RNA sequence: GGGAACGACUCGAGUAGAGUCGAAAAGGCGAGGUCUUCGGACCUCGCCAAAUGACCGCCAUUAUUGGCUAAGGCUACACGGACGGCCGGGUCAAAUGCCGAAAACUUCCGCCUUCGGGCGGAAGAACUAACGUAAAUAGUUCGCUAUUUACGUUAGAAAAGAAACAACAACAACAAC
Reactivity to DMS in 0.01 (KOAc 150mM, MgCl2 10mM, bicine 150mM(pH8.5), 24C), signal-to-noise 3, nucleotides 027 to 126: g030g030c010g030a020g010g030u000c010u000u010c190g030g010a020c000c000u000c010g020c010c000a000a030a050u010g000a010c010c010g040c000c000a050u000u010a150u000u000g010g000c000u010a060a030g000g020c000u000a060c130a100c020g000g000a020c020g000g000c010c000g000g000g000u000c010a030a070a040u000g000c000c010g000a210a050a100a110c000u000u000c010c000g010c000c010u000u010c180g020g010g020c000g000g000a000a000g010a040a120
Reactivity to 2A3 in 0.01 (KOAc 150mM, MgCl2 10mM, bicine 150mM(pH8.5), 24C), signal-to-noise 5, nucleotides 027 to 126: g000g010c020g020a010g060g020u050c050u150u200c300g070g020a010c000c010u010c010g010c000c000a000a000a000u020g000a000c000c010g110c010c000a090u160u150a140u300u300g030g000c080u150a180a100g000g000c000u010a020c090a030c080g010g040a000c010g010g000c000c000g000g010g000u000c010a020a020a000u050g000c000c000g000a040a020a020a030c000u000u000c000c000g000c020c010u060u120c260g100g000g020c000g010g000a000a000g000a000a010